[RMDB]
The data come from the RNA Mapping Database (RMDB), library M2RFPK. Chemical mapping of a 207-nucleotide RNA with 2A3. The RNA was probed in 150 mM KOAc, 10 mM MgCl2 and 150 mM bicine (pH 8.5) at 24 C. As a SHAPE reagent, 2A3 marks flexible, mostly unpaired nucleotides at the ribose 2'-OH.

RNA sequence: GGGAACGACUCGAGUAGAGUCGAAAAGCUUUUUUUUCGGAUUAGGCGUGGAGGCGAAAAUCACCCUCCUCGCAUCGCAAGUUCGUGCUUGCGACUUACACGUAGGGCGAGGGGUGGGCGAAAGUUGAAAACACGAUGUUGUUCGCAACAUCGUGAACCUAUAGCUGACUUUCGAGUCAGCUAUAGGAAAAGAAACAACAACAACAAC
Reactivity to 2A3 in 0.01 (KOAc 150mM, MgCl2 10mM, bicine 150mM(pH8.5), 24C), signal-to-noise 3, nucleotides 027 to 156: g050c050u020u070u020u010u000u040u080u260c180g050g010a170u140u110a100g020g010c030g000u020g000g010a000g000g000c080g100a090a020a010a040u140c060a060c000c000c000u010c000c000u000c000g000c010a000u000c000g010c000a020a020g000u220u300c130g130u300g090c000u000u010g000c000g000a000c000u040u140a030c190a020c060g070u080a070g000g020g090c170g020a090g020g050g040g060u190g020g020g000c080g020a120a050a000g000u010u020g030a040a010a010a010c020a010c000g010a000u000g000u000u000g020u060u050c150g000c120a010a000c000a000u000c000g000u000g000a000a000